Annotation:
Structure probing data (DMS and 2A3) for a 177-nucleotide construct. It was measured as part of the RMDB libraries RFM100 and RFMREP.
RNA sequence: GGGAACGACUCGAGUAGAGUCGAAAACGCUUUGCCGGUCGCAAGGCCGGCUAUGGCGAUAAACGUUCUUCGCAAUAAACCUAUCGGACCCGGGGGCGGUACCCGGCGCCUCCACCAGAACCCAGGAGAAACUUAAUUAGUUCGCUAAUUAAGUUUCAAAAGAAACAACAACAACAAC
Reactivity to DMS in 0.01 (KOAc 150mM, MgCl2 10mM, bicine 150mM(pH8.5), 24C), signal-to-noise 5, nucleotides 027 to 126: c020g010c010u000u000u010g000c010c010g010g010u000c010g020c300a140a190g010g000c000c000g000g000c000u000a000u020g000g010c010g000a110u030a060a080a180c130g000u010u000c040u000u030c030g020c080a100a090u020a070a080a090c040c030u000a090u010c050g000g000a100c050c050c050g000g000g000g000g000c050g000g010u020a060c030c040c000g010g010c050g010c040c010u000c020c010a080c050c040a080g010a070a100c010c010c010a080g000g000a250
Reactivity to 2A3 in 0.01 (KOAc 150mM, MgCl2 10mM, bicine 150mM(pH8.5), 24C), signal-to-noise 7, nucleotides 027 to 126: c020g000c010u030u030u050g000c000c000g000g010u010c000g010c110a090a100g000g000c010c000g000g000c000u000a000u010g000g000c000g010a010u170a020a130a010c050g030u040u020c030u110u090c030g000c060a050a140u120a150a100a040c010c010u050a080u090c030g030g010a050c000c010c030g010g010g000g020g000c010g000g020u040a060c010c010c000g010g010c010g000c000c000u000c000c010a030c010c010a020g040a040a060c000c000c010a010g000g060a080